[RMDB]
RNA sequence: GGGAACGACUCGAGUAGAGUCGAAAAUCCUCCUCCUUGCUGAGGUUCUUCCCUCCCGCGCUGAGUUGAUUCUUCUUGUUCUUGAGGGCCUUCCUUCGUCGGUGAUCCUGCCUCUCCCUGUCGGUGAUAAGGUGCGGGUUCGCCCGCACCAAAAGAAACAACAACAACAAC
Reactivity to 2A3 in 0.01 (KOAc 150mM, MgCl2 10mM, bicine 150mM(pH8.5), 24C), signal-to-noise 2, nucleotides 027 to 129: u040c010c010u000c020c000u010c000c000u000u090g000c070u130g040a050g020g000u020u040c000u080u000c020c050c000u020c020c000c000g050c010g010c060u000g050a030g020u090u010g060a140u000u050c000u000u010c000u040u060g010u020u030c020u020u050g030a000g010g000g000c020c010u010u000c000c000u010u080c000g070u000c000g060g020u030g020a030u010c000c000u020g040c000c010u030c030u010c000c010c000u090g090u110c000g040g020u030g000a040u050a120a090
Reactivity to DMS in 0.01 (KOAc 150mM, MgCl2 10mM, bicine 150mM(pH8.5), 24C), signal-to-noise 3, nucleotides 027 to 129: u030c010c000u010c000c000u020c000c030u050u050g030c040u090g000a160g020g020u010u020c080u000u080c010c030c000u010c030c040c050g040c190g020c130u040g020a170g020u070u040g010a160u020u030c100u030u050c090u040u020g030u020u050c050u000u010g010a160g010g010g030c060c040u000u030c030c070u000u040c020g010u020c170g020g030u000g030a090u010c040c000u050g040c040c020u000c000u020c000c030c120u020g060u000c060g020g040u060g000a030u060a100a070

Conditions: 150 mM KOAc, 10 mM MgCl2 and 150 mM bicine (pH 8.5), 24 C. An RNA of 170 nucleotides, treated with 2A3 and DMS and read out base by base. For 2A3 the reverse transcriptase was SuperScript II with manganese. Reactivities are given for positions 27 through 129. For DMS, 6,521 sequencing reads were counted. For DMS the reverse transcriptase was MarathonRT.